[RMDB]
RNA sequence: GGGAACGACUCGAGUAGAGUCGAAAAUUACCGCACCAGCCGCCAGUGGCUCUUGCCACGGUUCAGCAUCGGCAAACAGAUCCAACAUUACCUCUCCUCAUUUUCAGCUUCGCGGCGCAGCAGUUGAUACCAUGAGCCUAUUCGUAGGCUCAUGGUAAAAAGAAACAACAACAACAAC
Reactivity to DMS in 0.01 (KOAc 150mM, MgCl2 10mM, bicine 150mM(pH8.5), 24C), signal-to-noise 2, nucleotides 027 to 126: u020u000a180c040c000g000c170a110c050c070a090g000c050c070g020c080c030a060g030u010g000g000c000u000c170u010u020g030c000c000a020c040g060g020u000u010c100a090g000c070a030u000c060g000g040c050a080a070a110c160a090g010a070u000c060c000a060a130c080a060u000u000a060c030c010u000c050u000c030c010u030c090a050u010u030u000u000c090a130g030c060u010u000c090g020c090g000g000c050g010c020a090g030c030a070g010u010u020g010a250
Chemical mapping of a 177-nucleotide RNA with DMS. It was measured as part of the RMDB library OK2TST. DMS (dimethyl sulfate) methylates the pairing face of unpaired adenines and cytosines.